[RMDB]
RNA sequence: GGGAACGACUCGAGUAGAGUCGAAAAUCAGAAUCAGGCCGGAGUGUUUAGCGCUCCGUAAACACGGUCGUACAUCCAGCCGAUAGCCUGGUUCCUUGCAUUGAGUGAUGUACGGAGUUUAUAGAGCAAAAGAAAGACCUGUUCGCAGGUCUUUCAACGCUCUACAGAAGUUCGCUUCUGUAGAGCGAAAAGAAACAACAACAACAAC
Reactivity to 2A3 in 0.01 (KOAc 150mM, MgCl2 10mM, bicine 150mM(pH8.5), 24C), signal-to-noise 3, nucleotides 027 to 156: u090c010a010g020a000a000u000c000a010g000g000c000c000g020g000a000g000u050g060u120u190u260a150g090c040g020c010u000c000c000g020u010a000a000a000c150a040c080g050g000u030c000g000u010a010c010a030u000c030c060a010g070c020c040g040a010u040a010g000c020c000u010g000g000u000u000c010c020u020u110g030c030a100u040u110g070a060g090u130g030a000u000g000u000a020c030g040g030a060g010u110u160u030a130u080a040g090a020g030c030a090a060a090a000g010a000a000a000g000a000c010c010u020g030u050u060c170g000c040a000g000g000u000c000u000u000u000c000a000a000
Reactivity to DMS in 0.01 (KOAc 150mM, MgCl2 10mM, bicine 150mM(pH8.5), 24C), signal-to-noise 1, nucleotides 027 to 156: u000c040a050g000a040a060u030c020a020g040g000c020c060g050g000a180g030u000g070u010u000u010a200g000c050g020c000u000c020c010g020u000a000a020a060c040a130c090g040g040u010c010g000u000a040c010a050u000c000c020a250g030c050c030g040a150u000a080g010c020c010u020g000g010u000u000c000c010u000u000g000c130a200u010u000g010a180g020u020g020a040u000g000u000a020c030g000g000a130g020u000u000u020a030u000a060g000a060g020c010a090a080a140a200g010a020a010a040g010a000c010c000u000g000u000u010c300g000c000a020g050g000u000c000u000u000u000c000a050a100